[RMDB]
RNA sequence: GGGAACGACUCGAGUAGAGUCGAAAAGCCGCUUCAGCGUUCUUCCGAGCCAGCAUGGUCCACAGUUGAGCGUUGACGCAUUCACGUCCCCACUUCGUCCCGAUGGUCUGGAGCAUCGACCGCAGCGGCCUGUUUUCCUUUUCGAAGGAAAACAGGCAAAAGAAACAACAACAACAAC
Reactivity to DMS in 0.01 (KOAc 150mM, MgCl2 10mM, bicine 150mM(pH8.5), 24C), signal-to-noise 2, nucleotides 027 to 126: g010c040c100g000c000u010u000c030a000g000c000g050u000u000c000u000u000c000c110g010a150g010c000c060a140g000c060a090u010g000g020u020c030c030a080c220a160g000u000u010g000a070g020c070g010u010u000g000a060c100g000c050a100u000u000c020a130c100g000u000c010c090c020c050a130c060u000u010c040g020u000c000c000c080g010a110u000g000g020u030c020u020g050g000a110g010c100a040u010c050g020a110c040c010g040c070a090g020c050g000
Reactivity to 2A3 in 0.01 (KOAc 150mM, MgCl2 10mM, bicine 150mM(pH8.5), 24C), signal-to-noise 6, nucleotides 027 to 126: g060c020c020g000c010u010u030c030a010g020c010g040u000u010c010u050u020c010c020g040a030g020c020c020a090g130c070a220u250g030g000u080c040c040a120c050a090g020u010u040g040a020g040c010g010u010u040g010a020c030g000c020a040u090u140c060a020c040g060u030c010c000c000c000a040c020u040u040c020g060u010c040c020c020g090a120u120g030g050u010c070u080g050g050a070g030c020a070u050c020g060a050c000c020g010c020a010g070c020g060